[RMDB]
RNA sequence: GGGAACGACUCGAGUAGAGUCGAAAAGAUAUGGAACCCACAGACAUGAAGCUCGGAAACGAGCCUUCAACAGCUGUGUUCGGUUCCUAAGUCAAAACCUCAGAGACACUUCGGUGUCUCUGAGGAACUUAUCCUUAUGGUUCGCCAUAAGGAUAAGAAAAGAAACAACAACAACAAC
Reactivity to DMS in 0.01 (KOAc 150mM, MgCl2 10mM, bicine 150mM(pH8.5), 24C), signal-to-noise 6, nucleotides 027 to 126: g010a040u000a280u000g000g000a020a010c000c010c010a020c010a010g000a100c090a210u010g000a030a030g010c000u000c010g000g000a050a070a110c000g010a010g010c160c060u000u000c000a030a080c270a120g000c000u010g000u000g000u000u010c100g010g000u000u000c000c010u000a010a080g000u000c030a070a050a100a140c010c000u000c000a010g010a010g000a010c000a010c000u000u010c160g020g010u000g000u000c010u000c000u000g010a000g000g000a010a030
Reactivity to 2A3 in 0.01 (KOAc 150mM, MgCl2 10mM, bicine 150mM(pH8.5), 24C), signal-to-noise 6, nucleotides 027 to 126: g000a000u050a020u110g010g000a000a000c000c030c000a000c000a000g100a090c050a090u050g000a000a000g000c000u010c010g010g020a020a040a040c000g000a010g020c030c000u010u000c010a130a130c050a070g070c010u010g010u020g030u270u300c090g010g000u000u000c000c000u010a060a000g030u010c030a010a020a120a250c000c000u000c000a010g000a000g000a000c020a000c020u110u210c300g150g000u010g010u000c000u010c000u000g000a000g000g000a000a000
This 177-nucleotide RNA was probed chemically with DMS and 2A3. The 2A3 profile rests on 18,795 reads. The DMS profile rests on 8,804 reads.